[RMDB]
RNA sequence: GGGAACGACUCGAGUAGAGUCGAAAACACGGGCGUGCAGACCUUCAGGCGCGAGCACGACCGCUUCUGGAUCAUGGCCGCGCACUCCGAAGUCAACCUGCUGGCUGCAGGCCACGACAGCGGCAUGCCGCUCUCAAGACUUCGGUCUUGAGAGCGGAAAAGAAACAACAACAACAAC
Reactivity to DMS in 0.01 (KOAc 150mM, MgCl2 10mM, bicine 150mM(pH8.5), 24C), signal-to-noise 2, nucleotides 027 to 126: c140a150c010g000g000g000c020g040u000g010c030a040g000a120c040c000u000u000c240a080g000g000c070g020c000g000a300g050c010a030c030g000a060c030c010g000c170u000u010c130u010g000g000a100u030c040a060u010g000g000c010c000g000c010g000c140a100c150u010c040c030g000a040a060g000u000c040a110a210c060c000u000g000c030u000g060g030c110u000g060c020a020g010g010c100c040a060c090g000a070c060a100g000c010g000g000c020a100u000g030
Reactivity to 2A3 in 0.01 (KOAc 150mM, MgCl2 10mM, bicine 150mM(pH8.5), 24C), signal-to-noise 1, nucleotides 027 to 126: c080a020c000g010g000g000c010g040u040g020c030a020g030a140c020c020u140u150c130a160g130g000c110g010c000g150a050g040c010a000c040g010a030c000c000g010c030u080u030c080u130g130g020a140u150c030a070u110g300g000c010c000g000c010g010c080a100c100u030c000c030g050a070a000g000u010c010a000a050c020c000u000g020c040u050g150g120c030u100g000c000a030g020g030c060c040a110c070g050a050c000a020g040c040g010g000c010a000u100g000